[RMDB]
About this RNA:
The data come from the RNA Mapping Database (RMDB), library OK2TST. Chemical mapping of a 177-nucleotide RNA with DMS and 2A3. High DMS reactivity at an A or C suggests that its Watson-Crick edge is free. Reactivities are given for positions 27 through 126. For 2A3, 763 sequencing reads were counted. For DMS the reverse transcriptase was MarathonRT.

RNA sequence: GGGAACGACUCGAGUAGAGUCGAAAAUUCAGCGUGUGCAUAAUCGAUGUCAGCACGUAACGUAUGAAGUGGAACAGUUCCUUCUGAAUAUUGUUCAGCACGAGCGAUGUCAGCUCCGCCUAAACGACGCUUAGGUUGUCUUCGGACAACCUAAGCGAAAAGAAACAACAACAACAAC
Reactivity to DMS in 0.01 (KOAc 150mM, MgCl2 10mM, bicine 150mM(pH8.5), 24C), signal-to-noise 1, nucleotides 027 to 126: u000u030c000a140g000c000g000u020g010u020g000c020a070u010a140a180u010c130g000a120u000g030u000c080a210g020c010a070c020g000u000a110a110c050g040u000a050u010g000a010a050g010u000g000g020a020a080c210a280g000u000u000c050c050u000u000c060u060g000a060a110u000a130u000u020g020u000u000c090a060g000c090a130c120g000a090g020c040g020a050u000g000u020c040a060g000c050u000c060c020g000c030c030u000a030a050a100c080g000a120
Reactivity to 2A3 in 0.01 (KOAc 150mM, MgCl2 10mM, bicine 150mM(pH8.5), 24C), signal-to-noise 1, nucleotides 027 to 126: u050u050c030a030g050c000g010u040g010u040g000c040a010u180a120a060u300c140g100a020u110g010u050c070a040g000c000a000c010g010u020a110a000c060g070u010a090u280g030a020a030g020u090g000g070a020a020c010a080g000u030u000c010c000u020u060c010u110g050a080a020u090a030u160u120g030u030u000c040a010g040c200a070c180g000a010g000c010g020a010u010g090u020c000a000g010c020u010c010c010g050c020c000u030a050a050a000c020g160a030